[RMDB]
RNA sequence: GGGAACGACUCGAGUAGAGUCGAAAAGAUAUACCUAUAACGACACUGUGAUAUUUGCUUGCAUGUUUGGCUUCACCUUGAAGGGCAGCAAGCAAAUCCGAUGCAAUGCCCAAGGCACAUGGGAGCCACUUCCAUGACCAUUCGUGGUCAUGGAAGUAAAAGAAACAACAACAACAAC
Reactivity to 2A3 in 0.01 (KOAc 150mM, MgCl2 10mM, bicine 150mM(pH8.5), 24C), signal-to-noise 2, nucleotides 027 to 126: g070a020u200a000u030a240c000c000u080a090u080a190a100c060g120a000c030a020c080u070g070u090g270a080u050a060u170u030u000g010c020u000u030g000c040a300u040g160u100u130u110g210g000c000u030u000c070a180c170c070u070u160g080a050a000g000g030g000c000a000g030c000a010a010g000c000a000a030a000u000c000c010g050a080u090g040c010a160a010u130g050c000c000c100a070a090g050g000c050a010c010a150u100g060g010g000a010g030c020c000
Reactivity to DMS in 0.01 (KOAc 150mM, MgCl2 10mM, bicine 150mM(pH8.5), 24C), signal-to-noise 2, nucleotides 027 to 126: g010a120u010a080u000a170c020c000u010a110u020a080a110c080g020a060c050a040c080u000g000u030g030a140u010a050u000u000u000g000c010u000u000g020c000a060u000g030u000u000u010g040g020c010u000u000c010a140c270c160u010u010g020a040a060g000g000g000c010a000g000c020a010a010g000c010a000a000a010u010c120c100g010a090u000g010c060a070a080u000g040c000c000c050a120a070g000g000c070a050c060a070u000g010g000g000a080g000c060c050